Source information: The record gives the reactivity of an RNA of 177 nucleotides to 2A3 and DMS. The 2A3 profile rests on 3,474 reads. Conditions: 150 mM KOAc, 10 mM MgCl2 and 150 mM bicine (pH 8.5), 24 C. Source: RMDB library OK2TST, as collected in RNAgym. Reactivities are given for positions 27 through 126.
RNA sequence: GGGAACGACUCGAGUAGAGUCGAAAAGGCUAUGUUCUGCAGAAGUUGCUUAUGCUUUGCUUCUGAGAUAGUAAUGAAAGUCACUGUGCAUAUUUAUCUACAGAGGAAUUCUGCCUGGAGUUCGUCCGUGUAUAAAGGGUUUCGACCCUUUAUACACAAAAGAAACAACAACAACAAC
Reactivity to 2A3 in 0.01 (KOAc 150mM, MgCl2 10mM, bicine 150mM(pH8.5), 24C), signal-to-noise 5, nucleotides 027 to 126: g020g000c020u060a030u170g080u060u080c040u080g080c000a020g010a100a030g040u160u110g030c040u260u140a110u300g010c000u110u100u190g020c000u010u010c010u020g000a020g010a060u060a040g070u100a050a150u120g090a190a050a050g040u050c020a000c170u070g000u050g060c020a030u050a160u200u130u080a080u060c030u050a070c020a010g050a040g050g080a080a030u070u010c020u050g030c000c020u070g070g020a040g030u080u060c020g040u020c030c030
Reactivity to DMS in 0.01 (KOAc 150mM, MgCl2 10mM, bicine 150mM(pH8.5), 24C), signal-to-noise 7, nucleotides 027 to 126: g010g010c020u000a060u010g000u010u000c030u010g020c030a040g010a040a040g020u010u000g010c030u000u010a150u010g010c020u000u010u010g010c010u000u000c010u000g000a070g000a040u010a070g010u000a070a080u000g010a080a070a100g020u000c050a080c080u000g000u000g010c110a040u000a100u010u010u000a040u010c040u000a060c040a050g010a300g000g000a090a060u000u000c050u000g020c000c030u000g010g010a070g000u000u000c030g010u000c040c070